RNA sequence: GGGAACGACUCGAGUAGAGUCGAAAAGGGAAGACCCAGGAUGUAGAAGAUCAUAACAUGAGUGAUUCGGCAGAUUUGGAUUCAUAUAUAUAUCCACCCAUGUGGUACUUCAUUCUACGAUAUAUAUAAGAUCCAUCUGUAUAGAUAUCAUCAUCUAGCUACUCGCUUACUUCGGUAAGCGAGUAGCAAAAGAAACAACAACAACAAC
Reactivity to 2A3 in 0.01 (KOAc 150mM, MgCl2 10mM, bicine 150mM(pH8.5), 24C), signal-to-noise 1, nucleotides 027 to 156: g010g010g010a020a070g050a040c040c000c000a010g090g010a030u110g000u040a010g020a080a010g030a130u050c140a130u120a180a110c150a160u160g060a030g140u030g010a000u070u000c030g020g000c000a000g010a050u060u130u160g080g000a010u140u090c100a010u020a000u000a000u010a000u000a000u000c000c000a020c080c030c020a120u270g170u300g050g000u000a050c050u030u100c010a150u160u010c000u020a000c020g000a000u010a000u000a000u000a010u000a050a010g000a000u000c000c000a000u000c000u000g020u010a110u100a190g020a010u050a010u080c020a000u000c010a000u100c010u030a020